This 177-nucleotide RNA was probed chemically with DMS.
[RMDB]
RNA sequence: GGGAACGACUCGAGUAGAGUCGAAAAGAAAGAAAGAAAGAUUAACUCUGGCUUUUAACUUUGAUGGCAAAGGGGUAGCUAAACAAUCUAUGUCUUUGCCAUCAAAGUUAAAAGCCAUAGUUAAUAAGACUCAGUCAUAUUUCGAUAUGACUGAGUCAAAAGAAACAACAACAACAAC
Reactivity to DMS in 0.01 (KOAc 150mM, MgCl2 10mM, bicine 150mM(pH8.5), 24C), signal-to-noise 2, nucleotides 027 to 126: g000a120a050a110g000a180a090a090g020a060a150a100g000a080u010u000a000a000c000u000c010u010g010g010c000u000u020u000u000a000a000c000u010u000u010g000a000u010g000g010c000a020a000a000g000g010g000g010u000a000g000c200u030a070a110a150c300a130a130u010c000u000a010u000g000u000c000u000u020u020g000c000c050a000u000c000a010a000a000g010u000u000a000a000a000a000g000c000c000a000u000a000g000u000u000a000a000u000a050a140

Background: The DMS profile rests on 2,662 reads. The data come from the RNA Mapping Database (RMDB), library RFM100.